[RMDB]
RNA sequence: GGGAACGACUCGAGUAGAGUCGAAAAGAUAUGGAAUACGAUGCGAGUUACAAUCGGAAACGAUUGAAUAACGAUGAGCAUUGUAUUCCUAAGUCAAAAGGAUUUUCAUGUUCGCAUGAAAAUCCAAUCAAAAAAAUGAGUUCGCUCAUUUUUUUGAAAAAGAAACAACAACAACAAC
Reactivity to 2A3 in 0.01 (KOAc 150mM, MgCl2 10mM, bicine 150mM(pH8.5), 24C), signal-to-noise 1, nucleotides 027 to 126: g000a000u000a000u010g000g000a000a000u010a010c030g000a010u040g040c150g170a100g070u010u000a020c000a000a000u010c000g000g000a020a000a010c000g010a000u000u040g050a210a210u040a010a010c040g110a220u300g220a020g030c000a000u010u000g000u010a000u000u000c000c000u000a000a000g000u000c010a010a090a060a240g030g010a020u020u010u020u010c010a000u000g060u070u120c300g000c130a010u000g010a010a000a000a010u000c000c020a000a020
Reactivity to DMS in 0.01 (KOAc 150mM, MgCl2 10mM, bicine 150mM(pH8.5), 24C), signal-to-noise 2, nucleotides 027 to 126: g010a000u010a020u000g000g000a020a020u000a000c010g000a000u010g020c000g020a110g020u000u000a050c000a000a020u000c000g020g010a000a020a040c000g010a030u000u010g010a210a180u010a000a010c000g030a200u010g060a290g020c000a000u010u010g000u000a000u000u000c000c000u000a000a060g000u010c000a100a070a190a200g010g000a020u000u010u000u000c000a000u000g010u010u020c250g020c000a010u010g000a010a010a020a000u000c000c000a030a030